[RMDB]
RNA sequence: GGGAACGACUCGAGUAGAGUCGAAAACACUCACGAUUCGUCGUGAGUGAAAGAACGCCAAAGUGACGCAAUCUUCCGCGUCAGGAAGGCGAUACGAGGUAAAAACCGGGUCCUUCGGGACCCGGAACUUAUCCUACAGGUUCGCCUGUAGGAUAAGAAAAGAAACAACAACAACAAC
Reactivity to 2A3 in 0.01 (KOAc 150mM, MgCl2 10mM, bicine 150mM(pH8.5), 24C), signal-to-noise 4, nucleotides 027 to 126: c010a000c000u020c000a000c000g020a020u050u060c190g030u000c000g000u130g010a010g010u000g000a010a000a000g010a110a020c010g000c000c020a090a070a010g150u010g010a000c000g000c000a010a140u090c130u220u080c150c100g000c000g000u020c000a000g010g020a060a030g010g010c020g000a000u020a030c050g060a050g050g110u140a060a120a010a020a040c000c000g000g010g000u000c010c000u070u080c160g060g020g000a000c000c000c000g000g000a000a000
Reactivity to DMS in 0.01 (KOAc 150mM, MgCl2 10mM, bicine 150mM(pH8.5), 24C), signal-to-noise 5, nucleotides 027 to 126: c000a010c000u000c000a010c000g010a020u010u000c170g030u000c000g040u000g000a020g010u000g000a020a070a100g000a150a140c030g010c010c010a020a090a300g010u000g010a010c000g010c010a090a130u010c160u020u000c220c100g010c040g010u000c020a010g000g010a260a180g000g010c010g000a080u000a020c090g020a110g010g000u000a060a060a050a100a090c000c010g000g000g000u000c000c000u000u010c170g010g000g010a010c000c000c000g000g000a000a020